[RMDB]
RNA sequence: GGGAACGACUCGAGUAGAGUCGAAAACGCAUGCGAAAGCAUGCGGCUAUGCUAAUGCAUAGUGACCACGACUUACGAUGCUUAGUGGGCCAUCGCUUUUUUUUUGGUGAUGGCGUUUCCGCAUAGGUUUUUUUUUGCCUGUGUCGGUCGCAUCGAAGCUAGUUACGACGUUCGCGUCGUAACUAGCAAAAGAAACAACAACAACAAC
Reactivity to 2A3 in 0.01 (KOAc 150mM, MgCl2 10mM, bicine 150mM(pH8.5), 24C), signal-to-noise 1, nucleotides 027 to 156: c000g000c000a000u000g060c000g080a100a000a000g010c000a010u020g040c010g000g100c020u000a000u000g000c060u220a300a120u250g000c000a000u000a000g040u030g080a020c000c000a060c000g020a030c000u210u300a060c020g000a000u000g020c030u060u150a050g040u150g010g000g040c010c000a000u020c000g100c000u130u190u110u060u000u000u000u210u060g060g000u030g000a000u000g020g000c000g000u020u060u000c000c000g000c000a000u000a000g000g000u020u050u000u060u040u040u000u060u300g000c010c010u000g060u010g250u300c100g010g000u140c060g000c000a000u000c000g010a010a010